[RMDB]
RNA sequence: GGGAACGACUCGAGUAGAGUCGAAAAGUAUGGAUACAGGCACACAUUGGCGCCAUCAUGGGCAAGCUGGGACGAAUCUUCACCCUGCUUUGGUAACCCCCUUCUACCUGAUAGCCAGGUAAGACAGCAGGCGCAUGAUUCCGCCUUCCGAUGUUAACCCUCAAAAUUUAUUCGUAAAUUUUGAGGGAAAAGAAACAACAACAACAAC
Reactivity to 2A3 in 0.01 (KOAc 150mM, MgCl2 10mM, bicine 150mM(pH8.5), 24C), signal-to-noise 2, nucleotides 027 to 156: g090u030a040u190g000g010a060u080a160c060a110g020g090c000a000c000a000c010a090u080u250g090g000c010g030c000c000a080u100c080a030u060g000g040g030c000a010a010g000c000u060g030g020g060a060c100g080a090a090u050c050u090u020c070a060c000c000c000u010g030c000u090u080u130g110g030u130a170a180c000c010c050c010c000u040u030c000u010a000c000c000u040g050a200u090a090g100c030c010a000g020g000u020a070a000g010a000c060a020g140c010a020g040g000c020g000c040a000u030g040a080u140u010c030c010g010c000c000u060u000c010c020g000a010u010g010u070u020a060a060
Reactivity to DMS in 0.01 (KOAc 150mM, MgCl2 10mM, bicine 150mM(pH8.5), 24C), signal-to-noise 2, nucleotides 027 to 156: g030u000a090u030g010g030a120u010a090c090a070g060g010c010a090c060a120c100a170u000u010g000g010c070g020c030c010a070u010c070a080u000g000g000g040c040a080a070g020c020u010g000g000g020a120c110g020a040a130u010c080u000u010c030a070c030c000c010u000g030c020u010u020u010g050g000u000a120a200c010c010c010c030c020u000u000c020u000a070c000c000u010g010a210u000a100g030c140c020a030g010g000u000a020a080g020a050c120a040g010c020a050g020g000c040g110c030a060u000g000a080u000u000c060c040g000c040c030u000u000c030c030g000a110u000g020u000u000a090a170

Structure probing data (2A3 and DMS) for a 207-nucleotide construct. For 2A3 the reverse transcriptase was SuperScript II with manganese. For 2A3, 886 sequencing reads were counted. The DMS profile rests on 3,228 reads. Conditions: 150 mM KOAc, 10 mM MgCl2 and 150 mM bicine (pH 8.5), 24 C.